Chemical mapping of a 177-nucleotide RNA with DMS and 2A3. High DMS reactivity at an A or C suggests that its Watson-Crick edge is free. For DMS the reverse transcriptase was MarathonRT. The data come from the RNA Mapping Database (RMDB), library OK2TRN. The reactions ran in a buffer of 150 mM KOAc, 10 mM MgCl2 and 150 mM bicine (pH 8.5), at 24 C.
[RMDB]
RNA sequence: GGGAACGACUCGAGUAGAGUCGAAAAGGGGUAGGCCUGCUAGAUACGUCGGUCUUCAUUGCGCGCGAGAGCGGCGGUGCAAUCGCGGACCUGCCUGAACGCGUGGCGCUUUCGGUUAUGACGAUCGUGAUACAGGCUCGUUCGCGAGCCUGUAUCAAAAAGAAACAACAACAACAAC
Reactivity to DMS in 0.01 (KOAc 150mM, MgCl2 10mM, bicine 150mM(pH8.5), 24C), signal-to-noise 2, nucleotides 027 to 126: g030g000g020g000u000a020g030g000c000c040u000g000c020u000a110g030a100u010a060c050g020u000c000g010g010u000c010u000u000c080a080u000u010g010c020g000c010g050c140g010a050g000a070g000c020g010g010c010g040g000u010g040c240a070a040u000c170g010c020g010g010a020c000c030u020g040c010c010u000g010a090a080c070g010c050g020u000g030g010c050g020c040u000u000u000c040g010g000u010u020a120u000g000a130c110g000a010u010c100g000
Reactivity to 2A3 in 0.01 (KOAc 150mM, MgCl2 10mM, bicine 150mM(pH8.5), 24C), signal-to-noise 1, nucleotides 027 to 126: g020g000g000g030u030a040g010g030c000c000u000g020c020u070a090g000a180u130a120c020g000u000c010g020g300u010c000u000u010c060a040u020u230g050c050g010c010g000c040g000a020g000a010g030c010g000g000c030g000g030u140g060c050a100a100u090c050g020c000g030g020a030c000c000u010g000c030c010u000g000a080a040c000g080c000g110u070g120g050c000g000c000u040u130u030c020g060g050u100u120a130u300g040a090c110g040a040u090c000g000